[RMDB]
RNA sequence: GGGAACGACUCGAGUAGAGUCGAAAAUCAACGGCUCCAUGCUGCAGAGAGCUUUGCUUUUACAGCAGUUGCAAGGACUGGACCAGUUUGCAAUGCCACCAGCCACGUAUGACACUGCCGGUCUCACGGGCGUAAGUUUUUUCGAAAACUUACGCCCAAAAGAAACAACAACAACAAC
Reactivity to DMS in 0.01 (KOAc 150mM, MgCl2 10mM, bicine 150mM(pH8.5), 24C), signal-to-noise 1, nucleotides 027 to 126: u100c100a070a080c100g020g000c070u010c000c030a070u000g000c000u000g000c050a100g000a000g000a030g000c050u110u000u030g000c000u000u000u000u090a060c130a030g000c000a080g010u110u000g000c010a010a060g000g020a120c090u000g040g150a300c120c170a140g030u080u060u000g000c080a000a000u000g000c000c000a090c030c030a000g080c020c030a180c300g000u160a050u000g000a050c040a000c040u000g000c020c000g030g000u000c000u010c070a140c300
Reactivity to 2A3 in 0.01 (KOAc 150mM, MgCl2 10mM, bicine 150mM(pH8.5), 24C), signal-to-noise 3, nucleotides 027 to 126: u090c020a040a040c030g040g010c030u000c010c010a100u090g000c010u010g040c030a020g080a010g010a010g110c000u110u030u170g010c000u020u040u130u090a080c060a010g000c000a040g000u040u070g000c030a050a050g050g010a040c010u030g000g020a080c030c000a010g010u010u040u030g060c010a040a090u070g040c010c020a040c000c020a020g020c020c000a030c050g100u100a070u150g030a030c020a030c060u030g010c010c010g010g010u000c010u000c000a030c020
Conditions: 150 mM KOAc, 10 mM MgCl2 and 150 mM bicine (pH 8.5), 24 C. An RNA of 177 nucleotides, treated with DMS and 2A3 and read out base by base. For DMS, 894 sequencing reads were counted. 2A3 adducts were read by reverse transcription with SuperScript II with manganese. Reactivities are given for positions 27 through 126. It was measured as part of the RMDB library OK1LIB.